[RMDB]
RNA sequence: GGGAACGACUCGAGUAGAGUCGAAAAGAUAUGGAUCAAGGAGAACAACAGCUCUUCGCUCGGAAACGAGCGAGAGACAUGUUCCCUUGAUCCUAAGUCAAAACGCCAAGUCUUCGGACUUGGCGAAGUCCUAGGCUUAGUUCGCUAAGCCUAGGACAAAAGAAACAACAACAACAAC
Reactivity to 2A3 in 0.01 (KOAc 150mM, MgCl2 10mM, bicine 150mM(pH8.5), 24C), signal-to-noise 3, nucleotides 027 to 126: g010a010u010a000u080g010g000a000u010c000a020a010g180g000a300g070a170a010c230a100a020c060a300g010c010u000c030u300u210c050g000c010u010c000g030g010a020a020a010c010g010a000g030c020g000a010g000a010g010a010c010a200u300g000u020u000c000c000c010u000u000g000a000u000c000c000u000a000a000g000u040c000a000a020a090a090c030g000c000c000a000a010g010u000c000u090u300c300g170g000a010c000u000u010g000g020c000g000a000a000
Reactivity to DMS in 0.01 (KOAc 150mM, MgCl2 10mM, bicine 150mM(pH8.5), 24C), signal-to-noise 1, nucleotides 027 to 126: g000a010u000a020u020g000g000a000u000c010a010a010g000g000a220g010a020a000c000a140a100c300a170g010c000u000c000u010u010c060g020c000u000c000g020g010a020a010a050c000g010a000g000c000g010a000g000a030g020a000c030a090u010g010u000u000c000c010c000u030u010g010a000u000c010c000u010a010a020g010u000c010a130a050a170a200c020g000c000c010a020a020g000u000c000u000u010c220g050g000a010c000u000u000g000g000c010g000a000a020